[RMDB]
RNA sequence: GGGAACGACUCGAGUAGAGUCGAAAAGCGGGCCGGUCUGUGCGGGUUGGCGUCACCGCACUCGCCCCGAAGUCCCGUAGCUGCGACGAGAAGGUCGGCGGUAUCAGCGCCGAGCCGUACACCGCCGGUGAUUAGGCACGUUCGCGUGCCUAAUCACAAAAGAAACAACAACAACAAC
Reactivity to 2A3 in 0.01 (KOAc 150mM, MgCl2 10mM, bicine 150mM(pH8.5), 24C), signal-to-noise 1, nucleotides 027 to 126: g140c030g000g030g000c070c020g000g060u090c100u030g030u020g020c010g030g020g060u020u030g020g050c000g060u060c040a050c040c000g000c000a030c010u010c020g000c000c000c000c000g030a040a010g100u060c040c010c000g000u040a040g030c090u110g040c030g050a050c010g000a010g010a200a050g040g030u030c010g010g020c010g000g030u160a090u160c050a030g060c040g050c040c060g010a070g080c020c000g000u020a000c030a000c030c020g000c010c000g030
Reactivity to DMS in 0.01 (KOAc 150mM, MgCl2 10mM, bicine 150mM(pH8.5), 24C), signal-to-noise 2, nucleotides 027 to 126: g000c050g040g010g040c140c020g030g000u000c180u000g030u000g020c000g000g020g020u000u000g000g000c030g020u000c130a060c020c010g020c030a120c050u010c050g010c270c030c000c030g010a100a120g000u010c000c030c040g010u010a080g000c170u010g000c070g010a070c030g020a100g000a170a080g010g020u000c060g000g010c000g010g020u000a110u010c180a090g000c030g010c040c070g000a060g010c060c010g010u000a030c100a090c110c110g010c020c010g000